[RMDB]
RNA sequence: GGGAACGACUCGAGUAGAGUCGAAAACGUACUGCUAAAACUCGGAGGCUAUGGCAUAAUGCGAAUCACUACUAUUCUAAACCCACUAACAAACUACAUAGCCUAUCCAUUCCUCAUGCUUUCCAUAUGAGGCAUAAUCAUAACCAGCUCUAUCUGCCUAACCUAAUUCGUUCGCGAAUUAGGUUAGAAAAGAAACAACAACAACAAC
Reactivity to DMS in 0.01 (KOAc 150mM, MgCl2 10mM, bicine 150mM(pH8.5), 24C), signal-to-noise 4, nucleotides 027 to 156: c060g020u000a060c080u010g020c030u010a080a080a060a120c070u000c060g010g020a120g020g030c020u000a040u000g000g020c110a090u000a080a110u000g020c030g000a120a080u000c020a080c070u000a170c050u010a100u000u010c020u000a050a090a100c030c030c010a170c080u000a090a080c060a040a070a120c050u000a030c030a040u000a050g000c010c000u020a070u000c030c020a110u000u000c000c000u000c040a060u000g010c050u000u000u010c080c060a120u000a050u000g010a050g020g010c130a060u010a050a080u010c030a120u010a070a090c050c010a060g010c020u000c050u000a090u000c030u000g030c240
Reactivity to 2A3 in 0.01 (KOAc 150mM, MgCl2 10mM, bicine 150mM(pH8.5), 24C), signal-to-noise 9, nucleotides 027 to 156: c050g040u050a050c020u060g060c040u080a040a050a080a050c080u080c110g040g000a020g000g010c010u010a010u030g030g020c040a080u070a120a060u200g040c040g050a050a050u100c030a020c110u150a040c020u080a130u140u090c030u080a070a090a120c020c040c040a060c060u100a120a030c060a090a060a030c060u120a030c030a020u020a010g000c000c010u010a070u010c010c010a030u040u040c000c010u010c000a000u040g020c040u050u090u030c040c020a050u050a010u170g020a010g010g000c000a050u150a090a030u080c040a010u020a070a040c030c010a040g030c020u010c020u080a110u030c020u060g010c000
Description: An RNA of 207 nucleotides, treated with DMS and 2A3 and read out base by base. As a SHAPE reagent, 2A3 marks flexible, mostly unpaired nucleotides at the ribose 2'-OH. Values cover nucleotides 27 to 156. 2A3 adducts were read by reverse transcription with SuperScript II with manganese. Source: RMDB library PDB130, as collected in RNAgym. The 2A3 profile rests on 10,875 reads.